[RMDB]
RNA sequence: GGGAACGACUCGAGUAGAGUCGAAAAUGCACGGUGACUUGAUUACACUCUCUCAUUCAUGGUCACUUCCGAAGCGCUUUAGUGCCUUCCGUCCCUAAACCGCCAACAGCCAGAACGGCUUCUCCCCCAUACCAACACUUUUCGAAGUGUUGGUAUGAAAAGAAACAACAACAACAAC
Reactivity to 2A3 in 0.01 (KOAc 150mM, MgCl2 10mM, bicine 150mM(pH8.5), 24C), signal-to-noise 9, nucleotides 027 to 126: u140g020c040a020c070g020g010u030g020a030c020u040u050g040a040u130u200a060c060a050c050u080c000u000c010u020c050a060u100u010c030a040u120g070g010u020c010a020c030u060u020c030c020g050a060a020g020c020g020c060u070u110u150a080g040u070g060c000c000u040u030c020c030g040u040c000c000c000u050a110a090a030c020c020g020c020c020a040a030c010a080g010c010c000a040g040a120a030c030g020g000c000u030u010c020u010c000c000c000c000
Reactivity to DMS in 0.01 (KOAc 150mM, MgCl2 10mM, bicine 150mM(pH8.5), 24C), signal-to-noise 9, nucleotides 027 to 126: u010g020c090a080c110g000g010u000g010a040c020u000u000g010a050u010u010a110c180a090c060u000c030u000c020u000c050a050u010u010c040a040u020g010g000u000c020a040c030u010u010c070c070g010a080a080g010c080g010c040u000u010u020a080g020u010g010c030c030u000u000c030c040g000u000c010c020c010u010a040a090a090c080c030g000c030c030a060a090c140a080g000c020c020a100g010a090a150c100g010g000c030u000u000c050u000c010c000c000c070